[RMDB]
RNA sequence: GGGAACGACUCGAGUAGAGUCGAAAAUGAGAACAGAGAUUCUGUUUGUAUUAUUCAGUUGCAGUCCUGAUGGUCUUCAUGGCAUCAAGCAUACAGGAGAUGCUCAGUAAAUGUUUGCUAAGGAAAUUAAUGAAUUGAUCAAUGUGAUUGUGGCUUAUGCGUCGUGGGGAUUCGUCCCCACGACGCAAAAAGAAACAACAACAACAAC
Reactivity to DMS in 0.01 (KOAc 150mM, MgCl2 10mM, bicine 150mM(pH8.5), 24C), signal-to-noise 2, nucleotides 027 to 156: u000g000a300g010a020a030c020a050g000a220g010a190u010u000c020u000g050u020u000u000g020u000a050u000u000a070u010u000c090a070g030u010u000g010c030a050g030u010c040c000u010g000a140u010g020g020u010c010u000u020c080a090u000g000g020c040a060u000c030a130a110g030c050a110u000a140c030a100g000g000a250g000a130u000g030c030u000c060a080g000u000a050a130a070u000g030u000u010u010g000c020u000a100a100g040g000a100a070a110u010u020a070a150u000g020a110a040u020u000g000a010u000c020a010a110u000g040u010g010a020u000u000g030u000g030g010c010u010u000a060
Reactivity to 2A3 in 0.01 (KOAc 150mM, MgCl2 10mM, bicine 150mM(pH8.5), 24C), signal-to-noise 3, nucleotides 027 to 156: u170g020a020g000a010a010c010a020g040a020g030a170u250u040c020u060g000u010u090u080g070u060a100u160u070a060u070u080c060a020g020u060u030g010c020a000g030u020c010c000u040g030a090u150g010g100u010c050u040u010c050a060u040g050g020c040a030u000c020a070a000g050c000a030u060a100c030a080g040g060a070g040a070u030g010c020u000c100a000g030u030a010a100a070u120g050u050u090u050g020c010u040a070a060g190g010a120a060a040u100u100a030a060u100g050a020a050u160u180g000a000u010c010a030a060u080g030u050g070a050u010u010g010u020g010g000c000u040u020a030